[RMDB]
Structure probing data (2A3) for a 207-nucleotide construct. It was measured as part of the RMDB library M2RFPK.

RNA sequence: GGGAACGACUCGAGUAGAGUCGAAAAGUACUUUGGCCGGCUCGGAAUAGAAUCAGGGGGUGCAAACUGCCCACUGGCAGAAAGGAUUAUAGCAAAUGCGUACCCUAUUGCAAUACAGCCCGGCCAACAUAGACUACUCUAUUCGUAGAGUAGUCAACUCAAGACAGAACUUCGGUUCUGUCUUGAGAAAAGAAACAACAACAACAAC
Reactivity to 2A3 in 0.01 (KOAc 150mM, MgCl2 10mM, bicine 150mM(pH8.5), 24C), signal-to-noise 1, nucleotides 027 to 156: g030u070a060c090u120u010u000g000g020c000c010g000g010c000u000c110g060g000a110a060u220a240g080a170a000u200c170a070g000g000g000g000g030u150g000c000a000a000a160c000u000g000c000c000c030a240c250u210g020g050c000a000g070a060a130a000g140g070a090u280u230a120u190a160g100c050a000a160a070u150g000c030g030u050a010c000c060c000u010a070u000u150g050c010a110a000u130a190c000a010g040c080c030c000g000g000c000c050a000a000c000a000u080a030g000a000c000u000a000c000u000c000u020a050u000u070c090g070u010a000g000a010g040u000a000g000u000c000a000a000

2A3 adducts were read by reverse transcription with SuperScript II with manganese.